[RMDB]
RNA sequence: GGGAACGACUCGAGUAGAGUCGAAAAGCGAGUCGAAUGUGGCGCUGGUCGACGCGGUGGCGGCCAGUUGCUCGGUGCCGGGGGCGUGGCCUCCGGUGACAAUUGCCGGCCGCCGCUACAUGGAUGGUCAUUCGCCAUAUUUCGAUAUGGCGAAUGAAAAAGAAACAACAACAACAAC
Reactivity to DMS in 0.01 (KOAc 150mM, MgCl2 10mM, bicine 150mM(pH8.5), 24C), signal-to-noise 3, nucleotides 027 to 126: g010c020g000a100g010u000c010g000a090a050u010g030u010g010g010c030g030c300u000g000g010u000c020g010a100c120g030c060g000g010u000g010g000c010g010g010c050c040a010g010u000u000g020c080u000c090g000g010u000g030c010c010g000g000g000g020g000c020g010u010g020g010c000c000u000c000c000g000g000u010g020a030c030a060a090u000u000g020c060c030g000g000c000c010g020c000c000g010c000u000a040c110a110u000g010g010a080u010g010g000
Reactivity to 2A3 in 0.01 (KOAc 150mM, MgCl2 10mM, bicine 150mM(pH8.5), 24C), signal-to-noise 2, nucleotides 027 to 126: g040c040g030a030g040u030c030g020a060a080u140g000u040g030g000c020g000c030u020g000g060u020c020g030a050c010g030c070g040g030u040g000g010c020g000g010c040c010a000g040u050u100g030c040u000c020g060g110u110g000c040c020g010g010g020g010g000c210g180u140g150g060c000c020u000c000c000g000g000u000g000a000c000a020a110u050u070g000c000c000g110g040c000c000g000c000c000g000c010u050a010c010a050u120g150g030a110u140g080g040